[RMDB]
RNA sequence: GGGAACGACUCGAGUAGAGUCGAAAAGAUAUGGAUACUCAGAGAGUUACGACUGAGAACUACGAUUCCCGCUCGGAAACGAGCGAACAUCGCUCAGUCGUAACUCGACGAAGAGUAUCCUAAGUCACACCUGUCAAUUCUUCGGAAUUGACAGGUGAAAAGAAACAACAACAACAAC
Reactivity to DMS in 0.01 (KOAc 150mM, MgCl2 10mM, bicine 150mM(pH8.5), 24C), signal-to-noise 1, nucleotides 027 to 126: g020a120u000a300u000g010g000a000u000a040c010u030c000a090g010a180g000a010g000u000u000a000c000g000a020c000u040g000a010g030a100a120c220u030a300c020g010a040u000u000c300c040c070g030c060u030c000g000g000a140a140a240c000g010a020g030c020g020a050a110c300a010u000c000g000c000u010c000a010g000u000c000g020u010a000a000c000u000c000g000a080c300g000a070a120g000a000g010u000a000u000c000c000u000a000a110g000u000c030a300